[RMDB]
RNA sequence: GGGAACGACUCGAGUAGAGUCGAAAACUAGGUAUUCGUACCUAGCCUGCGUCCUAAGUCAGGAGGUUCGAAGUACCUUUCGCAACAGCUCGGAAACGAGACAUGCGAUUGGUACGUAGUUCCUGAUAUGGAGGUAAGUGCUUAUUCGUAAGCACAAGUACUCAUCCACGUUCGCGUGGAUGAGUACAAAAGAAACAACAACAACAAC
Reactivity to DMS in 0.01 (KOAc 150mM, MgCl2 10mM, bicine 150mM(pH8.5), 24C), signal-to-noise 1, nucleotides 027 to 156: c010u000a010g000g030u000a030u020u010c300g010u000a000c000c000u000a000g000c020c030u010g080c090g000u000c000c010u090a020a210g070u020c000a000g000g000a100g020g090u000u000c020g000a070a220g030u000a000c010c000u000u000u000c000g080c000a010a060c050a130g020c000u000c020g020g000a260a060a270c040g020a020g040a130c100a300u000g000c010g010a010u000u000g000g040u000a010c000g010u000a140g080u000u000c000c000u000g000a040u000a300u000g010g000a100g030g000u000a030a070g090u000g020c010u000u000a120u000u010c220g030u000a030a070g030c000a010c000a040a210
Reactivity to 2A3 in 0.01 (KOAc 150mM, MgCl2 10mM, bicine 150mM(pH8.5), 24C), signal-to-noise 4, nucleotides 027 to 156: c000u000a000g020g000u020a050u050u150c290g040u090a050c000c000u000a010g060c000c000u040g020c010g250u000c000c000u060a160a080g030u020c000a000g020g010a030g040g210u160u180c020g080a190a020g000u010a000c000c000u000u000u000c000g000c010a030a050c020a210g020c000u000c000g020g010a040a100a090c010g020a010g020a070c030a100u050g000c000g010a000u000u000g010g000u000a000c000g000u000a000g000u020u000c000c000u000g000a000u010a040u110g010g010a030g030g030u080a180a070g000u000g000c010u010u010a030u130u150c260g100u100a010a000g020c000a000c010a010a030